[RMDB]
RNA sequence: GGGAACGACUCGAGUAGAGUCGAAAACGGUCGAAAUUCGUUUCGACCGAAUAUGCUAGCUGAGCACAGCUGCAAUGCUAAGCAGAAAGCCAGCUGCAAGCGCGAGUUCGGCGUUCGCGCCGAACAAGUUAGCUUGUACGUUCGCGUACAAGCUAACAAAAGAAACAACAACAACAAC
Reactivity to DMS in 0.01 (KOAc 150mM, MgCl2 10mM, bicine 150mM(pH8.5), 24C), signal-to-noise 3, nucleotides 027 to 126: c020g010g020u000c000g010a000a040a050u000u020c230g010u000u000u000c000g000a010c010c000g010a040a030u000a070u000g000c020u000a030g010c010u000g020a220g010c030a050c260a230g020c040u000g010c020a070a120u010g010c160u020a070a120g030c010a000g000a040a080a080g000c020c000a000g010c010u000g000c040a060a070g010c100g010c120g000a220g030u000u000c000g020g020c020g000u000u000c200g030c020g030c010c000g010a010a010c010a050a070
Reactivity to 2A3 in 0.01 (KOAc 150mM, MgCl2 10mM, bicine 150mM(pH8.5), 24C), signal-to-noise 3, nucleotides 027 to 126: c000g000g000u000c000g010a000a020a030u140u090c180g050u040u010u010c010g000a000c000c000g000a010a010u110a040u040g020c070u090a030g010c000u020g030a030g100c030a040c040a110g070c020u010g020c030a060a060u200g080c020u070a120a060g000c010a000g040a030a030a010g000c000c010a010g010c000u010g010c030a020a040g050c080g010c030g080a090g070u000u000c010g000g000c010g030u050u060c190g000c000g000c040c000g000a000a000c000a000a000
Chemical mapping of a 177-nucleotide RNA with DMS and 2A3. It was measured as part of the RMDB library M2PK50.